This 207-nucleotide RNA was probed chemically with 2A3. The RNA was probed in 150 mM KOAc, 10 mM MgCl2 and 150 mM bicine (pH 8.5) at 24 C. Values cover nucleotides 27 to 156. It was measured as part of the RMDB library OK3TST. For 2A3 the reverse transcriptase was SuperScript II with manganese.
RNA sequence: GGGAACGACUCGAGUAGAGUCGAAAACAGGUACUGGCUUUGCUAUAGAUGAUAGCACGAUUGUAACUGCUAAACAUCUUUUUGAGUGUGAUGACCUUAAACCAACACAUUUGUCUGUUGAGUUAUCAUGUAGAUCUUAUUGGUGCACGUGGAAGGACUGUUAGGGCUUGUUCGCAAGCCCUAACAGAAAAGAAACAACAACAACAAC
Reactivity to 2A3 in 0.01 (KOAc 150mM, MgCl2 10mM, bicine 150mM(pH8.5), 24C), signal-to-noise 1, nucleotides 027 to 156: c020a030g090g020u050a040c030u080g000g000c000u000u160u070g070c030u120a030u040a110g020a000u020g020a000u000a000g000c000a020c110g000a050u070u170g110u080a090a000c080u050g000c030u000a050a050a050c010a000u080c000u000u000u030u110u130g170a120g050u050g040u020g050a040u100g020a080c010c000u050u050a000a000a050c010c040a150a000c000a020c020a050u010u100u300g130u150c070u000g040u050u000g090a070g030u060u040a050u090c020a080u020g110u140a050g000a040u020c000u100u110a120u050u120g000g000u000g000c080a000c100g020u010g020g020a060a160g040g010a030